Chemical mapping of a 177-nucleotide RNA with DMS and 2A3.
RNA sequence: GGGAACGACUCGAGUAGAGUCGAAAAGUGGGGUCAAGUCUCAUCUAUUUUGGCUCAAGAAAUGAUGCCGUCUCGGUGGCGAAAAGCAUCAAAUCAGGGGUGUUAACGGCUGAUGAAAUCAAUAUUGUAAUUGAAUCGUGUUCGCACGAUUCAAUUAAAAAGAAACAACAACAACAAC
Reactivity to DMS in 0.01 (KOAc 150mM, MgCl2 10mM, bicine 150mM(pH8.5), 24C), signal-to-noise 3, nucleotides 027 to 126: g030u010g010g010g020g000u010c140a100a160g010u000c010u000c040a080u010c070u010a130u010u000u000u010g000g000c030u000c050a100a100g000a030a070a200u000g000a020u000g020c000c030g000u000c070u000c130g010g010u030g010g000c030g010a050a040a190a110g020c010a010u000c020a020a030a190u000c050a110g010g010g000g010u000g000u000u000a100a080c140g000g010c030u000g010a060u010g000a060a020a110u000c150a050a070u000a110u000u000g010
Reactivity to 2A3 in 0.01 (KOAc 150mM, MgCl2 10mM, bicine 150mM(pH8.5), 24C), signal-to-noise 2, nucleotides 027 to 126: g020u030g020g030g040g050u020c060a030a030g110u010c020u020c030a090u070c010u090a250u060u040u050u050g000g020c000u000c030a010a030g090a020a070a000u070g020a000u050g000c010c050g050u000c050u000c080g180g080u170g040g020c040g010a000a090a000a060g000c010a010u020c000a000a020a060u100c040a030g000g020g030g010u050g010u040u060a060a060c050g080g000c070u000g020a080u050g010a070a090a050u170c050a070a040u110a110u250u200g100
Reactivities are given for positions 27 through 126. The reactions ran in a buffer of 150 mM KOAc, 10 mM MgCl2 and 150 mM bicine (pH 8.5), at 24 C.